[RMDB]
RNA sequence: GGGAACGACUCGAGUAGAGUCGAAAAUGUGGAUUGUGACACUGCAGGUGUGGGGAAUACCUUCAUCUGUGAAGAAGUCGCAAAUGACCUCACUACCGCCCUACGCAGGCCUAUUAACGCUACGGAUAUACGAGCGUCUUCGGACGCUCGAAAAGAAACAACAACAACAAC
Reactivity to DMS in 0.01 (KOAc 150mM, MgCl2 10mM, bicine 150mM(pH8.5), 24C), signal-to-noise 3, nucleotides 027 to 129: u060g010u030g090g000a110u000u060g000u000g030a040c010a090c020u000g050c050a080g040g110u000g000u000g010g030g060g020a290a040u030a040c040c030u040u030c000a000u030c010u000g010u010g000a130a020g040a230a080g070u040c030g020c030a080a000a080u080g010a110c050c000u000c030a160c030u000a060c040c020g040c100c000c000u020a080c130g000c060a100g000g000c040c030u050a020u000u110a000a000c080g010c110u020a080c100g040g020a080u060a100u030a090
Reactivity to 2A3 in 0.01 (KOAc 150mM, MgCl2 10mM, bicine 150mM(pH8.5), 24C), signal-to-noise 3, nucleotides 027 to 129: u140g000u030g020g000a000u000u020g000u020g010a010c000a000c040u030g030c000a000g000g010u000g030u000g020g020g030g050a020a130u150a270c000c000u000u000c000a000u000c000u030g010u010g020a000a040g040a060a040g020u010c020g000c010a040a030a090u190g090a030c000c010u040c020a020c030u050a050c030c040g050c000c010c000u010a000c040g020c060a030g030g060c010c000u160a070u110u170a110a000c030g020c040u070a080c060g020g070a050u070a020u030a260

This 170-nucleotide RNA was probed chemically with DMS and 2A3. The DMS profile rests on 5,070 reads. The RNA was probed in 150 mM KOAc, 10 mM MgCl2 and 150 mM bicine (pH 8.5) at 24 C.